This 207-nucleotide RNA was probed chemically with 2A3. The 2A3 profile rests on 1,138 reads. The reactions ran in a buffer of 150 mM KOAc, 10 mM MgCl2 and 150 mM bicine (pH 8.5), at 24 C.

[RMDB]
RNA sequence: GGGAACGACUCGAGUAGAGUCGAAAACGAGCUGACGCCCGCGGACCUGGUCGUGGCCGCGCUCAUGGGCGCCUUCAUGCACCUGGUAAACUUCACGCGCCUGGACCUCGUGCAGAAGCAGGAGUACAUGUGCAAGACGUUGGACGGCGUUCUGACCCACUUCCAGGAUUUUCGAAUCCUGGAAGUGAAAAGAAACAACAACAACAAC
Reactivity to 2A3 in 0.01 (KOAc 150mM, MgCl2 10mM, bicine 150mM(pH8.5), 24C), signal-to-noise 1, nucleotides 027 to 156: c030g010a000g050c050u060g090a060c010g050c010c050c020g040c000g060g020a130c040c030u100g030g000u030c020g020u000g010g030c020c030g040c030g000c010u020c070a150u200g040g000g000c050g060c010c000u070u040c000a070u070g010c010a020c000c020u020g000g070u100a140a110a080c020u050u020c040a060c140g040c020g040c020c030u010g000g040a060c020c040u040c080g030u050g000c010a020g050a150a010g000c000a010g000g050a010g010u050a060c010a030u060g000u010g010c030a060a050g060a080c110g090u100u040g070g000a030c020g000g040c000g000u030u020c010u000g060a070c000c000
The data come from the RNA Mapping Database (RMDB), library OK3TST.